[RMDB]
RNA sequence: GGGAACGACUCGAGUAGAGUCGAAAAGGGUUUGAGCCAUCGCCCGAAUAUGAUGGCUGAUACAAGUCGACAUUGUACGCGACGUAGUACGUACUCAUUAGUGCGAAAGCACGGUUAGUCCGACUAGGCAGGGACGAUCUUCUGUCAAUACUUAGAAGACGUACGACGUGUUCGCACGUCGUACGUCAAAAGAAACAACAACAACAAC
Reactivity to 2A3 in 0.01 (KOAc 150mM, MgCl2 10mM, bicine 150mM(pH8.5), 24C), signal-to-noise 1, nucleotides 027 to 156: g000g040g000u000u000u000g070a000g000c000c000a000u000c000g000c000c050c000g060a070a050u150a100u090g000a000u000g000g000c050u000g040a000u120a230c150a130a000g000u000c000g020a010c220a150u170u210g100u080a050c060g000c010g060a170c070g040u000a000g090u030a020c040g000u040a000c000u000c000a040u000u000a100g000u000g010c040g120a000a000a000g000c000a000c000g010g000u000u040a000g050u000c020c000g080a000c000u000a110g050g000c070a070g010g000g000a090c230g130a220u140c080u160u000c000u020g010u000c000a030a090u130a150c020u180u090a050g010a240a050
The record gives the reactivity of an RNA of 207 nucleotides to 2A3. For 2A3 the reverse transcriptase was SuperScript II with manganese. The RNA was probed in 150 mM KOAc, 10 mM MgCl2 and 150 mM bicine (pH 8.5) at 24 C. Source: RMDB library OK3TST, as collected in RNAgym. The 2A3 profile rests on 406 reads.